This 177-nucleotide RNA was probed chemically with DMS and 2A3. The DMS profile rests on 6,922 reads. The data come from the RNA Mapping Database (RMDB), library OK2TRN. For 2A3 the reverse transcriptase was SuperScript II with manganese.

RNA sequence: GGGAACGACUCGAGUAGAGUCGAAAACUUUUAGGUUCUCUAUCAGAUUUACCUGGUUUAGGUUACUUUGAUGAUCUUGCAGCUGCUCAAAGCAGAUGUGUCAAAGCACUAGAUAUGGGUGCAUGUCCUGCUCCUUUAAUUUCGAUUAAAGGAGCAGAAAAGAAACAACAACAACAAC
Reactivity to DMS in 0.01 (KOAc 150mM, MgCl2 10mM, bicine 150mM(pH8.5), 24C), signal-to-noise 5, nucleotides 027 to 126: c060u000u000u000u010a090g010g010u000u010c030u000c010u010a090u000c110a080g000a140u000u010u010a030c020c010u000g000g000u010u000u000a020g010g000u000u000a050c020u000u000u000g000a030u010g010a040u000c090u010u010g040c030a070g010c110u000g010c120u010c180a090a110a140g020c010a030g000a010u000g020u010g010u000c020a010a020a040g010c130a040c020u000a040g010a040u000a060u010g000g000g010u000g020c150a060u000g000u000c080
Reactivity to 2A3 in 0.01 (KOAc 150mM, MgCl2 10mM, bicine 150mM(pH8.5), 24C), signal-to-noise 4, nucleotides 027 to 126: c020u100u150u100u230a090g060g030u140u010c030u000c000u040a070u120c040a060g020a120u060u070u140a030c020c010u060g110g000u060u070u080a020g020g020u040u070a030c000u020u010u030g010a030u040g010a050u060c040u100u210g000c020a050g010c020u070g000c030u060c150a160a150a050g000c020a000g000a050u050g080u020g010u100c010a020a030a030g000c040a030c030u020a020g020a080u120a270u250g080g020g020u020g030c030a020u100g060u070c020